[RMDB]
RNA sequence: GGGAACGACUCGAGUAGAGUCGAAAAGGUAUCUCCCGAGGUGACCACGACGUUGCCGGCGUAGUCAUCGGGCAGCGCGGACAGCCCGCAGAGUACCGCAUGCCCGGUCCCUAGCGGUCGAUCCUGCGACAAGAGCUCAAUUCGUUGAGCUCUUGUCAAAAGAAACAACAACAACAAC
Reactivity to DMS in 0.01 (KOAc 150mM, MgCl2 10mM, bicine 150mM(pH8.5), 24C), signal-to-noise 2, nucleotides 027 to 126: g010g000u010a070u010c070u000c010c000c020g000a130g010g030u000g000a060c010c030a090c060g000a040c060g000u000u010g010c170c020g010g000c030g020u010a040g020u000c040a040u000c010g000g020g010c020a040g000c200g040c020g010g010a120c060a220g010c070c000c030g010c060a060g000a100g010u010a070c010c000g000c050a080u000g000c020c020c010g000g000u010c010c020c020u010a080g010c040g000g010u000c030g010a100u010c010c000u020g010c150
Reactivity to 2A3 in 0.01 (KOAc 150mM, MgCl2 10mM, bicine 150mM(pH8.5), 24C), signal-to-noise 2, nucleotides 027 to 126: g090g030u130a070u070c080u030c040c000c010g040a100g000g040u050g040a020c030c000a050c110g050a040c020g150u060u140g070c110c000g040g020c040g010u050a040g060u060c040a050u070c000g000g020g030c020a040g020c050g010c010g040g010a020c060a000g090c020c040c030g050c050a060g030a030g110u030a120c010c000g000c030a020u020g000c000c000c000g000g010u030c010c010c000u010a010g060c010g020g050u000c010g000a020u010c010c020u080g060c010